[RMDB]
RNA sequence: GGGAACGACUCGAGUAGAGUCGAAAAAAGAUCAAGCCCUCUCAAGAAGGCUAAGUUAUACGAAUUGAGAAAGCACGGAUCAGGAGUGUACUUUGUAAGAUUCAAGCUGUACAGUAAAUCAAACUAUACUGGUCUUGUCGGACUGUAUGACUCACACGCUUUAAAGUCCAUUCGUGGACUUUAAAGCAAAAGAAACAACAACAACAAC
Reactivity to DMS in 0.01 (KOAc 150mM, MgCl2 10mM, bicine 150mM(pH8.5), 24C), signal-to-noise 3, nucleotides 027 to 156: a110a100g010a090u000c040a130a110g000c010c010c010u030c020u020c090a110a140g010a070a100g010g010c040u000a040a090g010u000u010a140u000a100c070g020a110a160u000u000g000a150g010a070a090a050g040c030a050c070g000g000a100u000c070a140g000g020a140g030u000g060u000a070c070u000u020u000g020u020a110a200g000a100u000u000c020a040a090g000c040u010g000u000a010c000a020g020u000a040a060a110u000c130a070a110a040c040u000a090u000a060c110u000g030g000u000c040u000u010g000u000c050g030g020a130c090u000g010u000a010u000g000a050c020u000c030a080c080a070c250
Reactivity to 2A3 in 0.01 (KOAc 150mM, MgCl2 10mM, bicine 150mM(pH8.5), 24C), signal-to-noise 5, nucleotides 027 to 156: a000a000g110a050u100c090a090a000g020c000c010c000u000c010u000c050a070a100g100a060a020g040g000c000u050a030a010g040u100u030a090u020a090c060g090a130a110u090u120g020a110g000a020a030a020g020c040a030c060g040g000a030u040c030a010g070g000a040g060u040g000u030a020c030u070u140u050g060u130a100a080g020a110u100u120c040a040a010g030c060u030g020u050a020c010a040g020u100a000a050a100u100c080a050a040a050c030u050a040u080a200c020u050g050g020u020c040u040u130g050u080c050g020g020a040c000u010g010u040a040u030g020a000c000u050c030a050c000a000c130